[RMDB]
RNA sequence: GGGAACGACUCGAGUAGAGUCGAAAAUUGGCAGAGUGGACUUUCGGCUUGAUCGUCCGAGAGGGGGCCAAGUGGCUUCGCUUUGAUCUUAAAAUUGCUGCUCCAAAGGGAAGACUUGAAGAGAGAAUUAACGUGUUACAUUCGUGUAACACGUUAAAAAAGAAACAACAACAACAAC
Reactivity to DMS in 0.01 (KOAc 150mM, MgCl2 10mM, bicine 150mM(pH8.5), 24C), signal-to-noise 6, nucleotides 027 to 126: u020u010g010g030c080a050g010a100g020u020g010g010a090c030u000u010u000c010g000g000c110u010u000g000a050u010c060g000u010c010c020g000a040g010a030g010g000g010g000g010c030c020a180a110g020u030g010g000c030u000u000c020g000c050u010u030u010g010a040u010c020u030u010a030a050a050a060u030u010g010c050u010g000c010u000c020c030a050a100a080g010g000g010a090a090g000a070c050u000u000g010a090a080g010a110g000a100g000a130a140
Reactivity to 2A3 in 0.01 (KOAc 150mM, MgCl2 10mM, bicine 150mM(pH8.5), 24C), signal-to-noise 2, nucleotides 027 to 126: u070u030g030g020c020a000g030a020g080u100g010g060a040c010u010u020u020c020g010g010c020u010u040g020a040u050c010g040u030c010c010g000a010g000a000g020g020g000g010g000c010c000a090a080g120u170g060g000c000u020u010c010g000c030u040u060u170g010a020u000c000u070u140a060a080a060a050u110u100g020c020u020g000c000u000c020c000a030a040a010g050g010g010a060a040g020a060c020u060u070g080a110a020g050a010g000a000g040a090a040